[RMDB]
RNA sequence: GGGAACGACUCGAGUAGAGUCGAAAAGAUAGGGAUGGUAAAGAUGCUCUAAUGCGCUGGCUUAAAGCAACAUUUGCGCUGCAUUUGGUCGAGCCAUACGUGGUAAUGGAGCGGUGGGCGAGAAUCACCACUCAAUCCCGUUCGCGGGAUUGAGUGGAAAAGAAACAACAACAACAAC
Reactivity to 2A3 in 0.01 (KOAc 150mM, MgCl2 10mM, bicine 150mM(pH8.5), 24C), signal-to-noise 1, nucleotides 027 to 126: g190a040u230a100g030g000g060a000u140g120g000u160a190a000a000g010a020u040g020c000u000c020u060a110a160u120g000c040g030c060u030g060g000c010u030u110a040a060a060g000c050a060a110c010a100u100u120u150g020c220g040c100u130g020c040a070u030u050u060g120g000u120c020g010a000g020c000c030a020u060a080c060g030u040g040g010u090a080a080u120g000g000a080g010c020g000g010u010g020g000g010c010g010a010g040a050a030u050c020a010
Reactivity to DMS in 0.01 (KOAc 150mM, MgCl2 10mM, bicine 150mM(pH8.5), 24C), signal-to-noise 1, nucleotides 027 to 126: g010a050u010a040g000g010g010a050u010g000g020u000a030a110a130g000a060u020g010c010u000c080u000a020a060u000g000c090g040c240u020g000g010c020u000u000a090a110a080g000c080a020a050c040a120u000u000u000g040c080g030c060u010g000c020a080u000u000u000g020g010u000c050g010a050g020c000c010a030u000a060c110g040u000g020g010u010a060a100u000g000g000a040g030c100g000g000u000g000g000g020c050g000a110g010a080a040u000c180a150
Chemical mapping of a 177-nucleotide RNA with 2A3 and DMS. Reactivities are given for positions 27 through 126.